[RMDB]
RNA sequence: GGGAACGACUCGAGUAGAGUCGAAAACUUAGAUGUUCUGGGCUGCACGCGCACUACAAUGUUAUUUCUAGGUAUAUUGUAAAGAUAAAGGAUAACUCGGUUGGGAUUGCGUUCUGUAAUGGACGCAGAACUAGACACAUUUCGAUGUGUCUAGUUCAAAAGAAACAACAACAACAAC
Reactivity to 2A3 in 0.01 (KOAc 150mM, MgCl2 10mM, bicine 150mM(pH8.5), 24C), signal-to-noise 6, nucleotides 027 to 126: c040u090u070a040g040a120u110g030u090u000c030u020g010g040g000c030u020g010c020a020c060g030c000g030c010a010c020u070a020c050a040a060u030g050u110u040a090u090u150u060c090u130a070g100g030u030a050u010a020u110u090g100u100a080a130a050g060a050u130a060a130a030g060g010a040u050a080a030c020u020c100g070g010u040u040g030g000g050a090u040u080g000c000g000u020u000c000u030g150u130a040a110u200g000g000a000c000g010c000a000
Reactivity to DMS in 0.01 (KOAc 150mM, MgCl2 10mM, bicine 150mM(pH8.5), 24C), signal-to-noise 6, nucleotides 027 to 126: c020u010u020a070g010a110u010g020u000u000c040u010g000g000g000c050u000g000c070a060c100g010c100g010c050a070c060u010a040c060a040a050u000g010u000u000a060u010u010u020c090u020a100g010g010u010a040u010a040u010u010g000u010a060a090a120g000a090u020a040a090a080g010g000a060u010a030a060c040u010c060g010g010u010u000g010g000g010a110u020u000g000c010g000u000u000c000u000g010u020a090a050u000g000g000a010c000g030c000a030

This 177-nucleotide RNA was probed chemically with 2A3 and DMS. DMS adducts were read by reverse transcription with MarathonRT. The reactions ran in a buffer of 150 mM KOAc, 10 mM MgCl2 and 150 mM bicine (pH 8.5), at 24 C.